[RMDB]
RNA sequence: GGGAACGACUCGAGUAGAGUCGAAAAGGUCGAGCUCGAGGGCGGCGUCAAGGCGAACGAGCUGCGGAAGCUCAAGGUCUACGAGUACAGCUUCGUCCCGAUCGGGGCGAACCAGGACACCUCGGUCGUCGCCGUCAAGGCGCUCGCCGAUGGACUGCGAUAAUGACAUAUUCGUAUGUCAUUAUCGAAAAGAAACAACAACAACAAC
Reactivity to 2A3 in 0.01 (KOAc 150mM, MgCl2 10mM, bicine 150mM(pH8.5), 24C), signal-to-noise 4, nucleotides 027 to 156: g030g030u250c040g010a010g000c020u020c060g030a090g100g030g030c000g000g000c010g020u060c090a080a060g010g040c020g030a050a070c060g000a030g000c010u040g010c070g260g190a050a020g000c000u020c040a020a080g100g000u010c020u030a080c040g020a010g000u040a060c020a060g010c060u010u020c000g000u020c000c020c000g080a220u300c300g010g000g000g000c000g000a000a000c030c020a050g040g060a050c030a050c050c000u020c020g010g000u070c020g020u000c010g000c010c000g050u030c020a040a060g070g000c050g000c030u010c010g000c000c000g020a020u080g050g060a020c050u080g010
Reactivity to DMS in 0.01 (KOAc 150mM, MgCl2 10mM, bicine 150mM(pH8.5), 24C), signal-to-noise 2, nucleotides 027 to 156: g010g000u000c040g000a080g000c000u000c060g000a160g000g010g030c030g020g030c030g000u000c060a060a120g040g010c020g000a060a110c110g010a060g000c010u000g010c110g040g020a190a140g020c010u000c010a150a050g020g020u010c030u000a120c110g000a130g000u000a080c040a110g000c080u000u000c000g020u000c000c000c000g000a160u000c130g030g000g010g030c000g010a000a020c060c040a180g010g010a120c070a050c070c000u020c010g000g000u000c000g030u000c000g020c000c040g020u070c030a030a120g020g010c080g010c030u000c030g020c010c010g000a050u000g010g010a150c060u000g000
Chemical mapping of a 207-nucleotide RNA with 2A3 and DMS. Conditions: 150 mM KOAc, 10 mM MgCl2 and 150 mM bicine (pH 8.5), 24 C. For DMS, 6,655 sequencing reads were counted. DMS adducts were read by reverse transcription with MarathonRT.